[RMDB]
RNA sequence: GGGAACGACUCGAGUAGAGUCGAAAAGCUUCGGGGGAUUCGUCCCAGGAGUCGGCGUUGUGCUGGAUGAGGGCUGCGGUGAGGGUAGUCCGCUCGGGCAGCGGGAUGAGGUACAUCCGCACGAGGCGGUGUAAUUCAAAUUCGUUUGAAUUACACCAAAAGAAACAACAACAACAAC
Reactivity to DMS in 0.01 (KOAc 150mM, MgCl2 10mM, bicine 150mM(pH8.5), 24C), signal-to-noise 9, nucleotides 027 to 126: g000c020u000u000c020g010g020g020g000g000a100u000u010c130g010u000c010c010c010a170g000g000a060g010u000c070g010g010c040g010u000u000g000u000g000c020u000g020g010a050u010g010a180g010g010g010c040u000g010c040g010g020u010g000a100g000g010g010u000a100g010u000c100c020g010c020u000c040g010g000g020c070a050g000c030g010g010g010a100u000g000a120g010g000u000a140c070a050u000c010c010g010c010a060c020g000a050g000g010c080
Reactivity to 2A3 in 0.01 (KOAc 150mM, MgCl2 10mM, bicine 150mM(pH8.5), 24C), signal-to-noise 6, nucleotides 027 to 126: g010c000u070u060c050g180g020g030g000g100a070u070u080c080g040u030c040c000c010a010g030g030a020g020u060c060g050g030c090g100u090u130g040u100g060c050u130g020g050a070u050g020a070g010g090g000c020u050g000c030g110g110u140g030a070g040g030g000u040a040g070u040c020c040g040c050u020c020g060g060g000c030a010g010c000g030g030g010a080u130g050a030g000g060u060a020c010a020u010c020c010g010c010a040c030g020a030g050g020c070